[RMDB]
RNA sequence: GGGAACGACUCGAGUAGAGUCGAAAAAAAGAAGACGGCGAUGUGUUGUUGGCUGAGUUUGACACUUAUGACCCUAUUUAUAAGAAUGGUGCCAUGUAUAAAGGCAAACCAAUUCUUUGGGUCAAUACCGCUACCCUCUUCGGAGGGUAGAAAAGAAACAACAACAACAAC
Reactivity to DMS in 0.01 (KOAc 150mM, MgCl2 10mM, bicine 150mM(pH8.5), 24C), signal-to-noise 2, nucleotides 027 to 129: a010a130a010g000a060a050g000a010c120g010g020c030g040a000u010g010u040g020u100u000g020u000u000g000g000c050u010g010a120g000u000u000u000g000a080c000a030c110u000u040a070u040g000a040c030c000c000u040a100u050u030u020a080u030a050a000g020a000a030u000g020g090u020g010c010c020a070u000g030u120a130u050a060a150a060g010g020c030a030a080a060c020c020a060a090u030u000c000u000u000u000g000g000g080u060c010a020a020u020a040c180c120g050
Reactivity to 2A3 in 0.01 (KOAc 150mM, MgCl2 10mM, bicine 150mM(pH8.5), 24C), signal-to-noise 2, nucleotides 027 to 129: a000a000a000g140a000a000g020a000c050g000g030c020g000a020u000g050u000g000u120u000g000u050u000g020g000c060u000g100a040g150u070u050u100g060a070c090a040c080u030u020a030u190g000a000c010c000c000u090a070u200u220u040a000u080a090a000g010a000a040u050g020g010u000g000c000c000a110u140g060u140a120u050a130a200a000g000g000c020a000a030a210c000c000a110a200u000u030c000u010u000u000g000g000g000u000c000a000a000u140a030c060c000g000
The record gives the reactivity of an RNA of 170 nucleotides to DMS and 2A3. 2A3 is a SHAPE reagent: it acylates the 2'-hydroxyl of flexible nucleotides of all four kinds. Source: RMDB library 15KLIB, as collected in RNAgym. In probing experiments dimethyl sulfate is read out at A N1 and C N3, which are open when not base-paired. Reactivities are given for positions 27 through 129.